[RMDB]
Structure probing data (2A3 and DMS) for a 177-nucleotide construct. DMS (dimethyl sulfate) methylates the pairing face of unpaired adenines and cytosines. For 2A3, 793 sequencing reads were counted. Values cover nucleotides 27 to 126. It was measured as part of the RMDB library OK2TRN. DMS adducts were read by reverse transcription with MarathonRT. The RNA was probed in 150 mM KOAc, 10 mM MgCl2 and 150 mM bicine (pH 8.5) at 24 C. For 2A3 the reverse transcriptase was SuperScript II with manganese.
RNA sequence: GGGAACGACUCGAGUAGAGUCGAAAAACAAUAAUCAGCAUACAUAAAUGGCGUGCUAUUUAACUUUUGGUAAACAAGAUCUUAGUGAUUUUUCAACCACUACAAAAGCGAUGUGCGUAGCUUUUGAUACCAGUUGCUAGUUCGCUAGCAACUGGUAAAAAGAAACAACAACAACAAC
Reactivity to 2A3 in 0.01 (KOAc 150mM, MgCl2 10mM, bicine 150mM(pH8.5), 24C), signal-to-noise 2, nucleotides 027 to 126: a000c070a070a040u270a120a020u030c100a050g060c010a010u060a080c010a020u250a110a300a090u140g100g000c060g040u010g010c000u040a100u180u070u060a080a080c020u170u010u070u010g000g020u130a000a090a030c030a050a070g010a050u000c000u050u080a150g000u140g160a050u010u000u000u000u010c020a030a010c000c010a030c060u120a090c040a000a000a000a000g000c000g040a050u150g080u130g190c070g030u010a060g030c000u100u020u030u010g010a000
Reactivity to DMS in 0.01 (KOAc 150mM, MgCl2 10mM, bicine 150mM(pH8.5), 24C), signal-to-noise 1, nucleotides 027 to 126: a110c010a130a070u000a010a040u000c110a110g000c060a040u000a050c030a180u000a080a040a130u000g020g090c070g100u000g040c030u000a090u000u000u010a060a130c090u000u000u000u020g020g010u000a060a080a110c250a060a000g000a020u000c100u000u000a070g000u000g000a020u000u030u000u000u030c150a120a030c030c000a010c260u010a090c060a040a000a000a030g030c070g000a120u030g010u000g000c080g010u000a180g060c000u000u020u000u000g020a160